[RMDB]
RNA sequence: GGGAACGACUCGAGUAGAGUCGAAAAGAAAGUUCAAGCAAGCUAGCCGGCAAAAAAGCAAACUUGACCACCAAGGAUAAAAGAGAUCUUAUCCAAGGAUGCAAAACAUAAUCUCACUUUUGACACCAAAACAGGGAGUAGUUCGCUACUCCCUGAAUCUUAUUGAGUCGUUCGCGACUCAAUAAGAAAAAGAAACAACAACAACAAC
Reactivity to DMS in 0.01 (KOAc 150mM, MgCl2 10mM, bicine 150mM(pH8.5), 24C), signal-to-noise 2, nucleotides 027 to 156: g030a090a060a040g000u000u000c040a070a050g010c040a040a150g050c030u020a300g060c040c000g000g020c020a000a010a060a100a090a050g050c030a040a120a000c060u000u000g020a110c070c040a130c010c000a050a300g040g000a040u020a000a040a040a070g000a260g010a150u000c040u000u010a010u000c010c020a050a230g030g000a050u000g020c060a060a040a040a080c080a060u000a010a010u020c020u000c020a030c050u000u000u020u000g020a180c050a070c020c000a060a050a100a230c010a040g070g000g000a020g010u000a010g080u000u020c230g000c010u000a050c000u000c010c000c010u000g000a000a030
Reactivity to 2A3 in 0.01 (KOAc 150mM, MgCl2 10mM, bicine 150mM(pH8.5), 24C), signal-to-noise 2, nucleotides 027 to 156: g050a030a050a010g030u060u050c030a010a010g000c020a060a020g000c040u050a040g050c010c010g070g000c130a040a110a000a010a000a000g010c030a060a060a030c010u020u020g030a060c000c020a010c020c000a040a030g010g000a020u010a010a020a010a000g070a020g010a030u040c020u030u010a000u000c010c010a020a000g030g030a020u050g000c020a000a040a040a020c020a050u180a140a060u050c020u010c060a070c020u050u040u050u150g070a080c090a070c060c100a030a050a110a100c020a030g000g010g000a000g000u020a000g020u050u040c090g000c090u000a010c000u060c000c000c010u000g000a000a000